[RMDB]
RNA sequence: GGGAACGACUCGAGUAGAGUCGAAAAUCAUUGGCUUCGCUGCGCGCUGCGUUGCCUAGGCUUCAGUUGCUUCGUACUGUUGCCAACGUUGCAAUUUCCAAACGCUAAUGCGAAAGUGUGCAAACAAGAAGGCUGCGAGAUUCGUCUCGCAGCCUUCAAAAGAAACAACAACAACAAC
Reactivity to 2A3 in 0.01 (KOAc 150mM, MgCl2 10mM, bicine 150mM(pH8.5), 24C), signal-to-noise 1, nucleotides 027 to 126: u140c020a010u010u090g030g040c010u010u020c050g000c040u190g020c040g020c030g040c040u010g030c000g020u010u010g000c000c020u140a150g000g000c030u000u000c000a010g010u020u050g020c060u120u140c080g120u110a050c070u060g000u030u000g070c070c000a010a010c000g030u000u080g040c080a030a100u000u000u090c000c100a110a050a000c040g000c030u250a210a040u180g010c060g120a010a050a000g030u050g020u040g090c040a050a020a070c040a040a080

Description: The record gives the reactivity of an RNA of 177 nucleotides to 2A3. For 2A3, 704 sequencing reads were counted. For 2A3 the reverse transcriptase was SuperScript II with manganese. The reactions ran in a buffer of 150 mM KOAc, 10 mM MgCl2 and 150 mM bicine (pH 8.5), at 24 C. Source: RMDB library M2PK90, as collected in RNAgym.